[RMDB]
Source: RMDB library 15KLIB, as collected in RNAgym. An RNA of 170 nucleotides, treated with 2A3 and DMS and read out base by base.
RNA sequence: GGGAACGACUCGAGUAGAGUCGAAAACUCCAUCUGGUCUGUUCGGGCCCUCUUCGCCGGGGGGGCUCCUUCCCCAUCCUUAUCCUUCUUUCCAAGAAUUCCUUUGAUGUUUCCCAGCCAGGGAUUGAGAACACGGGAUUCGUCCCGUGUAAAAGAAACAACAACAACAAC
Reactivity to 2A3 in 0.01 (KOAc 150mM, MgCl2 10mM, bicine 150mM(pH8.5), 24C), signal-to-noise 9, nucleotides 027 to 129: c020u010c010c010a050u020c010u060g010g060u040c020u040g080u100u160c040g010g000g020c000c030c010u020c020u090u080c030g050c040c030g000g000g000g000g000g000g000c010u040c010c000u020u030c010c000c010c000a050u050c000c000u060u070a070u080c000c000u030u050c000u050u040u000c020c010a060a030g040a060a090u040u050c010c000u090u060u110g070a080u060g040u000u030u010c000c000c010a020g060c040c010a020g020g010g030a040u050u120g100a100g020a040
Reactivity to DMS in 0.01 (KOAc 150mM, MgCl2 10mM, bicine 150mM(pH8.5), 24C), signal-to-noise 7, nucleotides 027 to 129: c040u000c010c030a000u030c000u050g000g000u000c010u020g040u060u000c010g050g020g000c050c050c040u000c020u030u030c030g040c090c020g000g010g030g020g010g000g030c050u030c020c060u030u010c020c040c000c040a110u000c060c030u050u000a110u050c020c020u000u000c040u040u050u000c000c000a100a120g000a120a120u020u010c020c040u000u020u030g040a070u050g020u020u010u020c020c000c030a100g040c090c060a100g000g000g000a020u040u030g050a120g040a110